[RMDB]
RNA sequence: GGGAACGACUCGAGUAGAGUCGAAAAGUGGCACAGUUCGCUGUGCCACAAAGGACUACCCGUCAGGGUUAAGGCCAAACGGACAGCCGGGUCCACUGCCGAAAAUCCGUAGCUUCGGCUACGGAAAUCGUCGUAUAGACUUCGGUCUAUACGACGAAAAAGAAACAACAACAACAAC
Reactivity to DMS in 0.01 (KOAc 150mM, MgCl2 10mM, bicine 150mM(pH8.5), 24C), signal-to-noise 2, nucleotides 027 to 126: g000u000g000g010c000a020c010a010g000u000u020c230g040c020u000g020u000g010c000c000a010c000a000a060a130g000g010a000c040u000a070c000c000c000g000u020c300a080g040g000g020u000u000a070a020g030g000c000c030a030a120a160c050g010g000a040c030a280g000c020c000g000g000g000u010c000c010a150c090u000g000c020c010g000a230a030a060a120u000c000c000g030u000a000g000c000u000u040c190g040g000c000u000a000c020g020g000a000a010a020
Reactivity to 2A3 in 0.01 (KOAc 150mM, MgCl2 10mM, bicine 150mM(pH8.5), 24C), signal-to-noise 1, nucleotides 027 to 126: g010u000g000g010c020a000c000a000g000u010u060c130g010c090u000g000u000g000c000c020a000c000a000a010a000g010g000a010c000u040a040c020c000c000g100u130c100a070g040g060g020u100u190a130a160g000g000c010c020a090a100a010c020g020g010a030c000a000g000c000c000g030g000g030u010c010c000a010c020u060g020c010c000g010a000a030a000a000u030c010c000g000u010a010g020c000u030u040c240g090g000c000u000a000c000g020g000a030a000a000